[RMDB]
RNA sequence: GGGAACGACUCGAGUAGAGUCGAAAAUCAUAGCUUCACCAGCGCGACCUGGUCCUCCACGAGCUGGCCCGCGGCCGCGAGCUCAGCUUUUACCUUCCGGCCCACCUCCUCGCGCAGGUACACCGAAACUUCCUAAGAGAUUCGUCUCUUAGGAAGUAAAAGAAACAACAACAACAAC
Reactivity to 2A3 in 0.01 (KOAc 150mM, MgCl2 10mM, bicine 150mM(pH8.5), 24C), signal-to-noise 4, nucleotides 027 to 126: u080c020a040u070a160g030c040u160u120c060a010c030c010a020g010c030g010c020g020a060c000c040u040g020g010u040c000c020u050c030c020a070c080g010a020g010c010u010g020g010c000c010c010g050c010g080g090c130c180g010c040g010a000g020c040u060c280a000g010c000u030u030u050u080a060c020c000u080u040c030c020g010g000c000c020c000a040c010c020u020c000c010u010c010g010c010g000c020a000g010g000u040a020c040a030c040c010g050a070a040
Reactivity to DMS in 0.01 (KOAc 150mM, MgCl2 10mM, bicine 150mM(pH8.5), 24C), signal-to-noise 7, nucleotides 027 to 126: u010c080a110u010a100g010c090u000u000c120a070c030c030a070g040c040g020c040g000a050c080c060u000g000g000u000c040c020u010c040c030a100c200g000a030g010c020u000g000g010c000c010c020g020c020g010g030c200c170g020c020g010a020g000c020u020c020a030g010c020u000u000u010u010a090c080c070u000u000c060c050g010g000c050c020c040a090c030c020u000c020c050u000c020g020c030g000c030a040g020g020u000a080c130a150c060c030g000a090a090
The data come from the RNA Mapping Database (RMDB), library M2PK90. This 177-nucleotide RNA was probed chemically with 2A3 and DMS. DMS adducts were read by reverse transcription with MarathonRT. The 2A3 profile rests on 7,481 reads.